[RMDB]
An RNA of 207 nucleotides, treated with 2A3 and DMS and read out base by base.
RNA sequence: GGGAACGACUCGAGUAGAGUCGAAAACCGCGGUCUUCGGACCGCGGAAAAAAGCGUACUACUUGAGGAAGCACUGGCGAUAAGUCCCAAAUAGGACUUUUGACGCCAAACUUCUACCCACCAAGUAUCGCAAAAAAGAUGUGGUUCGCCACAUCAACCACAUCUUAAUGUUCGCAUUAAGAUGUGGAAAAGAAACAACAACAACAAC
Reactivity to 2A3 in 0.01 (KOAc 150mM, MgCl2 10mM, bicine 150mM(pH8.5), 24C), signal-to-noise 3, nucleotides 027 to 156: c000c000g020c000g020g000u040c010u090u120c300g070g000a000c000c000g000c000g060g000a040a000a000a000a000a020g020c020g030u090a040c060u000a000c000u020u020g000a010g010g040a000a000g020c030a040c170u020g010g000c000g020a020u010a070a010g000u040c000c010c050a130a190a130u270a090g000g000a000c000u010u010u160u220g200a100c030g000c000c000a010a050a030c000u010u000c000u030a080c000c050c020a050c010c030a030a000g000u010a080u300c060g000c060a050a080a060a000a010a020g000a000u010g010u020g000g050u020u070c210g080c060c010a000c050a010u020c000a000a020
Reactivity to DMS in 0.01 (KOAc 150mM, MgCl2 10mM, bicine 150mM(pH8.5), 24C), signal-to-noise 1, nucleotides 027 to 156: c000c000g080c010g000g100u000c000u000u000c300g040g040a000c000c040g050c000g060g020a000a000a050a080a000a090g010c030g030u000a100c100u010a070c000u000u000g000a150g000g010a020a010g020c000a150c170u000g030g000c010g000a270u000a000a010g020u000c000c000c020a040a120a110u010a000g020g010a020c020u000u000u000u000g030a180c000g010c000c000a010a050a030c030u000u000c000u000a060c000c000c000a300c160c030a030a020g030u000a020u000c030g000c000a010a070a050a140a070a150g030a000u000g010u010g010g020u000u000c180g040c000c030a000c010a030u010c000a030a120

For 2A3, 2,263 sequencing reads were counted. Source: RMDB library RNAMAK, as collected in RNAgym.